[RMDB]
RNA sequence: GGGAACGACUCGAGUAGAGUCGAAAAUGCAUAAAUCUAACUCCUACCAUCAGCUACACACUGCUUGACAUAUAUUGUUAGAAGCACCUCGCAUUUGUGGGUUCUCUUAAGCAAAAUACUUGCAUUAUCGCUAAGUAAAGUUCGCUUUACUUAGCGAAAAAGAAACAACAACAACAAC
Reactivity to 2A3 in 0.01 (KOAc 150mM, MgCl2 10mM, bicine 150mM(pH8.5), 24C), signal-to-noise 3, nucleotides 027 to 126: u040g000c020a040u100a140a110a050u040c040u060a000a060c020u020c000c000u010a050c020c000a040u070c020a000g000c020u080a040c060a010c010a010c080u060g010c010u030u080g020a020c040a020u160a030u030a050u100u080g020u020u040a040g010a160a020g020c020a030c000c040u030c030g000c040a110u050u040u140g110u060g030g060g000u030u000c030u010c000u070u060a090a020g030c010a010a030a060a110u190a170c060u030u030g010c000a010u080u080a070
Reactivity to DMS in 0.01 (KOAc 150mM, MgCl2 10mM, bicine 150mM(pH8.5), 24C), signal-to-noise 3, nucleotides 027 to 126: u010g010c040a090u010a030a110a100u010c040u010a080a100c070u000c030c050u000a080c120c030a090u000c070a040g000c030u010a050c080a080c140a060c090u000g000c080u000u000g000a030c020a050u000a100u010a060u000u000g000u010u000a070g000a080a090g020c060a060c090c040u000c090g010c100a120u000u000u000g040u000g000g000g000u000u010c020u010c030u000u000a060a070g020c050a020a030a090a090u010a090c130u000u000g000c040a090u000u000a140